RNA sequence: GGGAACGACUCGAGUAGAGUCGAAAAACAGGGCUUCGCUCACCGCAGGCACAUACAGACCCCGAGACUCCACAAAGGAAUUACGUUUAUCUAGAGACACCUCGUCGGAGUCAGCAUCUGCCUGCAGGAAGCCAAAGAGCGUGGGAGGGUAUAGCGGAUACACAGUACGAUUCGUCGUACUGUGUAUAAAAGAAACAACAACAACAAC
Reactivity to 2A3 in 0.01 (KOAc 150mM, MgCl2 10mM, bicine 150mM(pH8.5), 24C), signal-to-noise 2, nucleotides 027 to 156: a000c050a040g030g030g020c040u030u030c060g050c120u060c050a140c040c050g000c000a010g020g000c030a050c000a020u240a030c070a050g110a080c030c040c000c000g000a040g010a080c000u000c010c020a000c050a050a190a020g080g000a120a090u200u170a090c080g050u030u100u040a160u120c090u060a040g010a010g000a110c020a050c090c030u020c050g080u050c100g010g040a030g010u000c010a000g010c000a010u040c000u080g000c000c000u000g000c000a020g010g000a010a020g040c010c000a000a060a000g030a000g000c100g000u060g000g000g060a260g050g000g030u050a090u130a180g060c060g010g010
Reactivity to DMS in 0.01 (KOAc 150mM, MgCl2 10mM, bicine 150mM(pH8.5), 24C), signal-to-noise 2, nucleotides 027 to 156: a110c090a190g010g000g030c000u020u000c070g070c050u010c040a220c070c020g000c000a030g000g020c000a030c010a070u000a040c000a130g010a060c010c020c000c010g000a100g020a130c020u010c000c020a080c060a230a160a200g030g030a070a040u010u010a090c090g020u000u020u000a090u050c120u070a110g020a210g000a080c080a090c020c000u000c070g030u000c010g030g010a010g000u010c010a040g030c010a050u000c060u000g020c000c000u000g030c000a050g030g010a060a030g000c020c010a000a060a050g030a140g020c070g050u000g000g000g000a180g000g000g010u000a130u000a090g000c080g020g010